Background: Structure probing data (2A3) for a 177-nucleotide construct. The data come from the RNA Mapping Database (RMDB), library RFM100.
[RMDB]
RNA sequence: GGGAACGACUCGAGUAGAGUCGAAAAACGGACUGGUACGCCAGUCCGAAGCAGCAAUUCAUGUUUUGAAGUGCUUUAAAUGGUUCAAAACGUGAGGCGCUGCUAUAGUCGCCAUACGUGGCGACAAGUCAGAACGCCUGUUCGCAGGCGUUCUGACAAAAGAAACAACAACAACAAC
Reactivity to 2A3 in 0.01 (KOAc 150mM, MgCl2 10mM, bicine 150mM(pH8.5), 24C), signal-to-noise 1, nucleotides 027 to 126: a000c000g000g000a000c010u000g000g000u030a000c270g080c050c000a000g020u000c000c000g000a000a000g020c000a000g000c000a000a000u010u000c000a000u000g030u010u000u010u010g060a170a130g060u060g180c080u100u140u070a100a180a100u160g010g010u000u000c010a000a000a000a000c000g000u000g000a020g000g000c000g000c000u000g010c010u010a000u000a000g000u000c010g000c000c000a010u020a060c250g080u030g000g000c000g000a000c000a000a000